[RMDB]
Chemical mapping of a 177-nucleotide RNA with DMS. For DMS, 1,202 sequencing reads were counted. The RNA was probed in 150 mM KOAc, 10 mM MgCl2 and 150 mM bicine (pH 8.5) at 24 C. Reactivities are given for positions 27 through 126.
RNA sequence: GGGAACGACUCGAGUAGAGUCGAAAAGAUAUGGAGCCAGGCUCUCGCUGGGUCGGAAACGACCCACGAGUGAGGCCUGACUCCUAAGUCAAACUGAGUGCUCGGUGUUCGCACCGAGCACUCAGAAUCUGAAAAGAGUGUUCGCACUCUUUUCAGAAAAAGAAACAACAACAACAAC
Reactivity to DMS in 0.01 (KOAc 150mM, MgCl2 10mM, bicine 150mM(pH8.5), 24C), signal-to-noise 1, nucleotides 027 to 126: g020a030u000a300u020g010g020a010g030c000c000a000g000g040c000u000c010u000c010g000c180u000g060g000g020u010c000g030g000a070a050a140c000g020a010c000c000c000a030c040g000a010g000u020g000a050g020g000c000c010u000g000a000c010u010c000c000u000a010a030g000u000c020a130a130a270c010u000g000a020g020u000g000c000u050c000g020g050u010g020u010u000c250g030c040a000c000c000g000a000g010c000a030c000u020c000a010g010a040a030